This 177-nucleotide RNA was probed chemically with 2A3 and DMS. Reactivities are given for positions 27 through 126. It was measured as part of the RMDB library OK1LIB. Conditions: 150 mM KOAc, 10 mM MgCl2 and 150 mM bicine (pH 8.5), 24 C. 2A3 is a SHAPE reagent: it acylates the 2'-hydroxyl of flexible nucleotides of all four kinds. Reactivities are rounded to 0.1 and cut off at 0 and 3.
[RMDB]
RNA sequence: GGGAACGACUCGAGUAGAGUCGAAAAGAACCGAGAACGGUAAGACGCGCUAUGACAAAAGCAGCAAUAGAUCAUACGCCGCAAGUGGCAAGACGGAGAGCGCGCAAAGCGGUAUGUAAGAGAAGAAAGUAUCCGUAGGGUUCGCCCUACGGAUACUAAAAGAAACAACAACAACAAC
Reactivity to 2A3 in 0.01 (KOAc 150mM, MgCl2 10mM, bicine 150mM(pH8.5), 24C), signal-to-noise 3, nucleotides 027 to 126: g050a000a000c010c080g010a090g040a300a050c070g020g000u100a060a020g140a040c000g030c010g010c000u010a060u170g030a030c050a060a230a040a000g060c110a040g010c010a000a170u030a180g060a010u090c000a010u020a090c080g030c050c000g000c050a120a030g030u100g160g000c060a070a000g080a020c020g000g040a010g000a000g040c060g000c000g000c060a000a140a000g030c000g000g040u090a070u130g050u050a070a010g060a000g010a120a000g100a030a150
Reactivity to DMS in 0.01 (KOAc 150mM, MgCl2 10mM, bicine 150mM(pH8.5), 24C), signal-to-noise 3, nucleotides 027 to 126: g000a160a150c000c000g000a160g020a070a100c080g000g000u000a060a050g010a080c050g060c030g010c000u000a070u020g000a030c130a060a070a090a010g010c090a060g020c140a100a090u010a020g000a140u000c120a090u010a100c150g000c030c030g000c100a160a200g030u020g030g000c030a050a030g030a060c170g000g000a130g020a040g000c060g000c000g030c110a010a000a060g000c020g000g000u010a030u030g000u010a090a050g000a070g020a060a070g010a080a050